Chemical mapping of a 177-nucleotide RNA with DMS and 2A3. The reactions ran in a buffer of 150 mM KOAc, 10 mM MgCl2 and 150 mM bicine (pH 8.5), at 24 C. Source: RMDB library RFMREP, as collected in RNAgym.
[RMDB]
RNA sequence: GGGAACGACUCGAGUAGAGUCGAAAACAUUGGAGAGUAAUUUCUCUCUCCUUAAUCACUUUACUAUCACGGAUGAGGAUAGGUGGUUGCAGAAACAAACUUACCCGUACCUUCGGGUACGGGUAAGGAAGUUAAUGUCGUUCGCGACAUUAACUUCAAAAGAAACAACAACAACAAC
Reactivity to DMS in 0.01 (KOAc 150mM, MgCl2 10mM, bicine 150mM(pH8.5), 24C), signal-to-noise 4, nucleotides 027 to 126: c070a140u000u000g010g010a020g010a020g010u020a060a130u010u000u010c110u000c010u000c000u010c010c000u000u000a020a060u000c060a040c030u000u020u000a280c030u000a010u000c030a040c070g020g010a100u020g030a140g010g000a040u000a010g010g010u000g000g000u000u000g010c160a080g020a110a070a070c070a050a060a300c010u000u000a010c000c000c000g020u010a010c000c000u010u010c250g020g010g000u010a000c020g000g020g000u000a000a000g000
Reactivity to 2A3 in 0.01 (KOAc 150mM, MgCl2 10mM, bicine 150mM(pH8.5), 24C), signal-to-noise 3, nucleotides 027 to 126: c000a020u020u190g010g000a010g000a000g010u040a070a200u020u290u010c060u010c000u010c000u010c000c030u000u070a050a030u050c000a000c060u140u150u300a080c000u000a010u070c040a040c140g280g100a230u170g080a140g060g020a030u020a040g060g010u000g030g030u020u040g020c090a050g300a170a180a020c050a060a010a010c040u000u010a010c020c000c000g000u000a020c000c010u040u040c200g130g000g010u000a010c000g000g000g000u000a000a010g010